[RMDB]
RNA sequence: GGGAACGACUCGAGUAGAGUCGAAAAGAUAUGGACGCACGCAGAGCGAUAAGAAGGUAUCGGAAACGAUACACUUCUUUUGACGCUCGAGGUGCGUCCUAAGUCAAAACCUGCGUUCGCGCAGGAACUAUCAAUAGAACUUCGGUUCUAUUGAUAGAAAAGAAACAACAACAACAAC
Reactivity to 2A3 in 0.01 (KOAc 150mM, MgCl2 10mM, bicine 150mM(pH8.5), 24C), signal-to-noise 3, nucleotides 027 to 126: g030a010u050a020u140g020g000a010c010g010c000a000c010g090c080a020g000a000g000c020g050a050u010a120a010g010a010a000g010g010u010a000u010c000g030g000a060a090a020c020g010a000u000a010c020a050c030u000u000c000u020u020u010u040g060a040c040g000c010u010c000g000a010g000g000u000g010c000g000u010c000c000u000a010a000g000u010c000a010a010a050a100c000c000u000g010c000g020u010u070c250g000c000g000c140a000g000g010a000a020
Reactivity to DMS in 0.01 (KOAc 150mM, MgCl2 10mM, bicine 150mM(pH8.5), 24C), signal-to-noise 9, nucleotides 027 to 126: g000a050u000a300u000g010g010a010c000g020c010a000c000g000c040a300g000a020g020c010g020a160u010a020a010g010a010a010g010g010u000a000u000c000g010g000a130a100a210c000g020a020u000a000c010a080c000u000u000c000u000u000u010u000g020a200c060g010c000u000c000g010a250g000g000u000g010c000g010u000c000c000u000a000a080g000u000c040a110a060a090a170c010c000u000g010c000g010u000u020c250g030c010g020c010a010g000g000a040a080